[RMDB]
RNA sequence: GGGAACGACUCGAGUAGAGUCGAAAAAGUCUGCUGGCAAAACGCUGUUGCUGAUCCGGAUACAAGGAGCUGAGUUCCUUGGCCAGUGCAGUGGCAAUGCGUAUUCCAUUGUUCGGGUCCAGCCACAUAACCCUAUUGGCUUCGGCCAAUAGGGUUAAAAAGAAACAACAACAACAAC
Reactivity to 2A3 in 0.01 (KOAc 150mM, MgCl2 10mM, bicine 150mM(pH8.5), 24C), signal-to-noise 1, nucleotides 027 to 126: a000g200u000c010u000g010c000u000g000g000c000a030a030a000a020c000g000c060u020g030u110u020g000c010u040g000a110u000c040c050g040g030a050u130a240c000a030a020g000g000a030g000c060u090g060a010g260u100u100c000c000u020u030g010g000c050c000a060g010u080g160c000a010g010u010g070g000c020a020a120u130g030c010g000u000a020u070u000c020c020a020u070u170g190u130u110c050g010g010g000u060c040c000a010g000c000c000a020c000a020
Reactivity to DMS in 0.01 (KOAc 150mM, MgCl2 10mM, bicine 150mM(pH8.5), 24C), signal-to-noise 2, nucleotides 027 to 126: a080g000u000c090u020g030c010u000g000g020c030a040a020a070a020c010g010c000u000g020u000u000g010c010u010g000a150u000c010c040g000g020a090u020a140c010a030a010g000g010a040g010c100u030g010a180g020u000u010c000c000u000u000g010g000c020c000a040g010u000g000c010a020g030u020g000g020c010a030a070u020g040c010g000u000a030u000u000c020c020a190u010u000g020u020u030c170g000g000g010u010c000c010a020g000c000c300a070c220a110